Chemical mapping of a 207-nucleotide RNA with 2A3 and DMS. For DMS the reverse transcriptase was MarathonRT. Values cover nucleotides 27 to 156. The reactions ran in a buffer of 150 mM KOAc, 10 mM MgCl2 and 150 mM bicine (pH 8.5), at 24 C. Values are in units of 0.01, from 0 to 300, in steps of 10. DMS (dimethyl sulfate) methylates the pairing face of unpaired adenines and cytosines.
RNA sequence: GGGAACGACUCGAGUAGAGUCGAAAAGAAGUGGAUUGCAGAUGCUAGAUUUUGAGAGAUGCAGUUUGUGCAAAGGAGGGUCUUGAAAAGGCCUUCGAAAUGUGUCUGCAAAGGCUAAAAUAAUCACAUUUUGUAUUUGCACAGCAUUUUCAUUGUAUGAUCGUGCAUUAUUCGUAAUGCACGAUCAAAAAGAAACAACAACAACAAC
Reactivity to 2A3 in 0.01 (KOAc 150mM, MgCl2 10mM, bicine 150mM(pH8.5), 24C), signal-to-noise 2, nucleotides 027 to 156: g080a040a000g050u030g050g060a020u050u040g010c030a010g020a050u080g020c010u050a020g010a210u090u140u170u120g060a080g000a000g000a020u040g000c020a030g050u060u140u090g010u010g000c000a000a020a010g050g020a010g000g000g010u000c000u050u110g100a120a150a090a030g000g000c000c000u010u000c000g020a000a000a000u020g000u000g010u010c050u000g020c010a000a100a000g050g000c030u110a050a010a030a130u140a060a050u120c020a000c000a030u010u040u040u070g040u020a070u000u030u010g020c010a010c010a010g000c000a000u070u030u060u110c050a050u010u190g010u080a120
Reactivity to DMS in 0.01 (KOAc 150mM, MgCl2 10mM, bicine 150mM(pH8.5), 24C), signal-to-noise 1, nucleotides 027 to 156: g000a150a200g020u000g000g000a090u000u010g000c000a060g020a130u000g000c030u000a160g010a210u000u010u000u010g000a140g010a090g020a050u020g020c000a120g000u000u010u000g030u000g020c030a010a010a150g040g010a060g020g020g000u000c010u000u000g010a130a060a080a160g000g000c020c000u000u000c020g020a000a000a000u020g030u000g010u000c000u000g000c060a020a080a130g030g030c100u000a060a050a100a120u000a150a090u010c030a010c050a040u000u000u000u000g000u000a160u000u000u000g000c000a020c000a080g010c030a000u000u000u000u000c060a140u020u000g010u000a130